[RMDB]
RNA sequence: GGGAACGACUCGAGUAGAGUCGAAAAGGUGUCUUAGAUGCAGCGGAGUGUGUACCUACAUUCAAUACUGACCCUCAUGAAAUUAUAGGUAUUAUUGCUGGUGGACAACAUGCUAUGACGAUGGCUGUCCUUCCUAGGUAUUCGUACCUAGGAAGGAAAAAGAAACAACAACAACAAC
Reactivity to DMS in 0.01 (KOAc 150mM, MgCl2 10mM, bicine 150mM(pH8.5), 24C), signal-to-noise 5, nucleotides 027 to 126: g000g010u000g010u010c030u000u000a060g000a110u020g000c010a070g000c080g030g000a090g010u000g020u000g010u010a050c040c010u010a080c150a030u000u020c100a060a090u020a060c080u000g000a110c050c020c030u040c100a110u020g000a030a050a050u030u010a090u010a050g000g000u010a030u000u000a050u010u000g000c030u000g000g010u020g000g000a030c060a080a080c120a060u020g000c010u010a020u020g000a070c090g000a060u030g000g000c040u020g000
Reactivity to 2A3 in 0.01 (KOAc 150mM, MgCl2 10mM, bicine 150mM(pH8.5), 24C), signal-to-noise 7, nucleotides 027 to 126: g050g000u030g030u060c030u070u150a080g000a130u100g060c000a010g020c030g060g060a090g040u090g010u020g020u030a050c010c010u020a020c020a060u030u060c040a030a050u050a110c050u070g100a090c000c010c010u070c050a090u190g120a070a060a020u240u150a100u110a090g030g020u030a040u100u040a130u070u140g030c020u040g020g040u030g030g040a010c010a060a010c020a060u100g000c010u030a020u130g060a020c040g040a030u040g060g000c040u030g040